[RMDB]
RNA sequence: GGGAACGACUCGAGUAGAGUCGAAAAUAACCGCACGUUGGAUUGAGGAUUGUUUGGCUGGUGUUUUACCUAUUCCUGACUCUAUCCAAAAACAGCUGGCAUGCUGUUUAGUUGCCGCGGGGCAGGCCAGGCCUGCCCUAUUCGUAGGGCAGGCCUGAAAAGAAACAACAACAACAAC
Reactivity to DMS in 0.01 (KOAc 150mM, MgCl2 10mM, bicine 150mM(pH8.5), 24C), signal-to-noise 7, nucleotides 027 to 126: u010a070a100c040c020g000c040a090c300g010u000u000g010g000a030u000u010g000a040g000g010a110u000u000g010u000u000u000g000g020c130u000g010g010u010g010u010u000u010u000a050c070c090u010a160u010u000c010c000u000g020a230c020u000c010u000a030u000c010c010a010a050a080a050a030c020a020g010c000u000g020g030c200a100u000g010c000u000g000u000u000u000a060g000u000u000g010c050c060g020c110g010g010g010g040c140a060g010g010c150
Reactivity to 2A3 in 0.01 (KOAc 150mM, MgCl2 10mM, bicine 150mM(pH8.5), 24C), signal-to-noise 2, nucleotides 027 to 126: u050a030a020c020c020g000c010a040c100g070u040u040g040g010a020u030u050g010a020g060g000a050u050u130g110u130u060u070g090g000c060u050g010g010u000g070u030u160u090u030a040c010c010u030a070u070u030c000c010u030g090a050c010u010c000u020a020u060c000c000a000a020a000a000a060c000a000g020c000u110g160g030c060a060u140g020c020u000g030u040u030u040a030g010u010u120g050c060c020g040c040g000g040g050g030c060a020g050g030c000

Record summary: The data come from the RNA Mapping Database (RMDB), library OK2TST. The record gives the reactivity of an RNA of 177 nucleotides to DMS and 2A3. High 2A3 reactivity points to a flexible backbone, as in loops and unpaired stretches. DMS adducts were read by reverse transcription with MarathonRT.